[RMDB]
An RNA of 177 nucleotides, treated with 2A3 and read out base by base. The 2A3 profile rests on 503 reads. The RNA was probed in 150 mM KOAc, 10 mM MgCl2 and 150 mM bicine (pH 8.5) at 24 C. Reactivities are rounded to 0.1 and cut off at 0 and 3.
RNA sequence: GGGAACGACUCGAGUAGAGUCGAAAAUUCUGAGAAUUGUUUCCAAUUCACAAUAUGGCAAUAUCCUAGAAUAAUGAACAGGAACUCUGUGCAAUGGCAUUGGAGCUUGUGGCAUUGCAUCGUUCUUGAGGAACUUCCGAUUCGUCGGAAGUUCCUCAAAAGAAACAACAACAACAAC
Reactivity to 2A3 in 0.01 (KOAc 150mM, MgCl2 10mM, bicine 150mM(pH8.5), 24C), signal-to-noise 2, nucleotides 027 to 126: u130u010c050u050g050a060g000a050a050u050u000g000u190u230u070c040c000a020a080u100u200c090a010c000a100a090u050a060u240g050g000c010a010a000u030a170u050c000c040u000a000g000a120a000u100a080a160u080g020a010a010c000a000g000g000a000a090c000u000c020u120g010u000g000c000a000a000u000g050g070c000a050u090u020g270g000a120g110c130u000u160g000u000g060g080c000a000u000u000g000c000a030u050c050g000u030u030c000u010u020